Conditions: 150 mM KOAc, 10 mM MgCl2 and 150 mM bicine (pH 8.5), 24 C. The record gives the reactivity of an RNA of 177 nucleotides to 2A3 and DMS. The DMS profile rests on 1,478 reads. Source: RMDB library OK2TST, as collected in RNAgym.

[RMDB]
RNA sequence: GGGAACGACUCGAGUAGAGUCGAAAACUUUUGUUAAUAAAUAUGUUACACCUUUUGAUGACAAACAUGUUUAUCAUUUUGAGGUCCAUUUCCAAGUGUCAUCGCGUUUCUUGACCUCGAACUUGGAGGGUAAUAUCAGUUUCGACUGAUAUUACCCAAAAGAAACAACAACAACAAC
Reactivity to 2A3 in 0.01 (KOAc 150mM, MgCl2 10mM, bicine 150mM(pH8.5), 24C), signal-to-noise 1, nucleotides 027 to 126: c030u130u170u150u300g000u000u110a080a010u040a020a090a030u100a000u050g000u020u060a120c080a100c030c030u030u200u150u250g080a080u040g020a030c030a010a040a000c020a020u040g020u010u040u040a050u060c040a090u020u070u080u200g030a000g030g000u030c040c020a060u000u000u040c050c020a060a020g020u010g090u090c000a000u080c030g000c050g080u040u000u040c100u070u100g010a010c020c060u040c060g080a020a050c020u020u020g000g070a080
Reactivity to DMS in 0.01 (KOAc 150mM, MgCl2 10mM, bicine 150mM(pH8.5), 24C), signal-to-noise 2, nucleotides 027 to 126: c040u000u020u000u030g000u030u000a110a030u000a010a020a030u000a020u000g000u000u000a170c110a050c050c020u010u000u010u000g020a020u000g000a060c100a080a020a010c020a010u010g010u000u000u000a000u010c070a090u010u000u000u000g010a030g010g030u000c030c120a140u000u000u010c010c010a080a070g030u010g000u000c050a070u000c050g030c180g000u000u000u000c030u000u010g010a040c010c050u000c100g000a030a040c140u000u020g020g010a260